[RMDB]
RNA sequence: GGGAACGACUCGAGUAGAGUCGAAAAAAUUUUGACCUUGCUAUUGAAAUGACUAAGGCUUCUUACGAAAUUUGGGCAGAUAUAAACAGCGAUUCGUUAAAAUAUGUCAGUUAAAAUUAAUAAUUGCCAUUGUUAGAGUGUUCGCACUCUAACAAUGAAAAGAAACAACAACAACAAC
Reactivity to DMS in 0.01 (KOAc 150mM, MgCl2 10mM, bicine 150mM(pH8.5), 24C), signal-to-noise 1, nucleotides 027 to 126: a160a070u000u000u020u000g000a070c000c080u000u010g000c030u000a080u000u000g010a060a110a030u000g000a120c180u000a020a030g000g010c200u000u010c030u010u010a060c090g010a040a030a100u020u010u000g010g010g030c010a030g010a020u010a060u000a060a040a050c080a080g020c040g000a110u010u020c080g000u000u000a060a080a010a070u000a010u000g000u010c040a080g010u000u000a030a020a060a070u030u010a060a120u010a020a060u010u000g000c150
Reactivity to 2A3 in 0.01 (KOAc 150mM, MgCl2 10mM, bicine 150mM(pH8.5), 24C), signal-to-noise 1, nucleotides 027 to 126: a000a030u070u080u030u070g010a010c000c000u000u060g030c000u010a030u250u180g050a050a110a000u090g020a000c040u070a120a000g000g000c060u080u080c010u070u140a050c000g080a110a110a150u070u010u100g070g000g000c000a000g020a030u090a000u020a070a090a010c000a010g040c000g040a080u060u130c010g000u000u010a080a100a120a000u120a010u060g010u000c010a020g010u000u000a170a090a040a090u090u200a150a110u060a110a090u090u090g030c000